[RMDB]
RNA sequence: GGGAACGACUCGAGUAGAGUCGAAAAAGAAUAGUUUUCGAACUAUUCUCACGACGACCUUGGGAAACCCUGAGGGGCGAUCCCACGCGAUCGUCUGUUCGAACACCUGGUUGUUCGCAACCAGGAAUACUAUUCCCUCGUUCGCGAGGGAAUAGUAAAAAGAAACAACAACAACAAC
Reactivity to DMS in 0.01 (KOAc 150mM, MgCl2 10mM, bicine 150mM(pH8.5), 24C), signal-to-noise 2, nucleotides 027 to 126: a030g010a020a010u000a000g000u000u000u000u010c140g000a030a020c000u000a010u000u010c000u000c070a070c200g010a010c010g000a050c030c000u010u010g000g000g000a040a300a090c050c000c000u020g010a130g040g020g010g040c040g000a170u000c000c000c000a030c120g000c090g000a070u000c000g020u000c010u000g000u000u000c050g000a080a100c210a110c010c000u000g000g000u000u010g000u000u010c240g010c010a010a010c000c000a010g000g010a040a030
Reactivity to 2A3 in 0.01 (KOAc 150mM, MgCl2 10mM, bicine 150mM(pH8.5), 24C), signal-to-noise 2, nucleotides 027 to 126: a000g040a000a000u040a000g010u000u030u100u200c280g040a020a000c000u000a040u040u020c040u020c030a030c030g030a020c000g000a000c020c030u000u000g050g000g000a030a060a040c000c000c020u060g050a210g030g040g000g020c040g070a300u020c000c000c000a020c030g040c080g130a300u000c040g010u000c040u040g040u060u080c080g050a130a000c040a060c050c000u010g010g030u000u010g020u040u070c170g020c080a000a010c010c000a000g000g000a000a000
Conditions: 150 mM KOAc, 10 mM MgCl2 and 150 mM bicine (pH 8.5), 24 C. The record gives the reactivity of an RNA of 177 nucleotides to DMS and 2A3. Reactivities are given for positions 27 through 126. The DMS profile rests on 1,625 reads.